The record gives the reactivity of an RNA of 207 nucleotides to 2A3. Reactivities are given for positions 27 through 156. The data come from the RNA Mapping Database (RMDB), library RNAMAK.
[RMDB]
RNA sequence: GGGAACGACUCGAGUAGAGUCGAAAAGGGGUCAUCCGGUAGGGAUUGAAUGAGGCUUGGAUUUAUCCAUUACGAUAUGGGACUGAAGCCUCCACGGUCCCAUAUCGUAAUGGAUUGUCAGCCUCAUGAUCCCUAUAAUCGGAUGACGGAGGCACCCGGUACAGGGAUGGUUCGCCAUCCCUGUACCAAAAGAAACAACAACAACAAC
Reactivity to 2A3 in 0.01 (KOAc 150mM, MgCl2 10mM, bicine 150mM(pH8.5), 24C), signal-to-noise 1, nucleotides 027 to 156: g080g020g080g020u010c000a010u010c000c000g060g000u020a020g040g000g030a000u010u080g300a120a100u060g000a020g000g000c070u220u300g170g030a120u220u120u100a300u100c000c000a010u000u000a010c000g000a000u000a000u000g000g000g010a000c000u000g040a060a040g040c000c000u010c020c000a050c020g030g000u020c020c000c000a010u000a000u000c000g010u000a000a000u010g000g000a000u000u000g000u010c010a010g020c000c040u000c000a000u020g010a000u020c000c000c000u000a000u010a020a020u210c010g000g000a000u000g000a010c000g000g010a050g000g000c020a050c000c000c000